[RMDB]
RNA sequence: GGGAACGACUCGAGUAGAGUCGAAAAGGCGCUAAGCAAUGGAAGUGAUUCUUGAGGGAAGCAAUUCUGCAGAGAUAUUUCCACCCUGGGAUGGCGUCGCCGGAUAACACCUACCCGUUACAGGGAAAUUGGCUGUCUGGCUGGACAACCGCAAUUCGUUAGUGUCUAUCUUCGGAUAGACACUAACAAAAGAAACAACAACAACAAC
Reactivity to DMS in 0.01 (KOAc 150mM, MgCl2 10mM, bicine 150mM(pH8.5), 24C), signal-to-noise 1, nucleotides 027 to 156: g040g030c030g030c040u000a130a300g000c070a140a120u000g000g000a080a030g020u020g010a100u000u000c020u000u010g050a280g010g020g020a020a140g010c160a050a100u020u010c030u000g000c040a300g010a030g000a050u000a090u000u000u000c030c010a150c040c060c080u000g000g020g000a170u000g010g000c060g030u000c080g000c000c010g040g000a040u000a020a040c180a000c030c020u000a110c010c010c000g020u000u000a210c190a260g010g000g010a020a050a030u020u010g010g010c100u000g000u010c030u000g000g050c020u000g010g010a030c050a030a050c020c010g030c030a030a180u000u000c040
Reactivity to 2A3 in 0.01 (KOAc 150mM, MgCl2 10mM, bicine 150mM(pH8.5), 24C), signal-to-noise 3, nucleotides 027 to 156: g010g010c010g000c030u060a030a050g080c060a050a300u040g000g000a010a010g010u050g100a210u090u040c020u030u040g020a150g010g030g010a020a020g040c040a060a250u050u020c030u060g040c090a010g000a000g020a050u000a020u030u010u000c000c010a010c020c000c000u010g000g030g020a090u130g020g000c000g000u010c020g000c020c000g000g010a020u040a090a050c050a030c040c030u040a020c020c000c010g030u040u120a080c140a120g010g020g000a000a030a120u210u050g010g000c020u010g000u010c010u000g040g000c050u070g080g040a030c040a060a040c030c010g070c110a030a160u200u140c060

Chemical mapping of a 207-nucleotide RNA with DMS and 2A3.
For DMS, 1,952 sequencing reads were counted.
It was measured as part of the RMDB library ARCHII.
DMS (dimethyl sulfate) methylates the pairing face of unpaired adenines and cytosines.
Values are in units of 0.01, from 0 to 300, in steps of 10.
For DMS the reverse transcriptase was MarathonRT.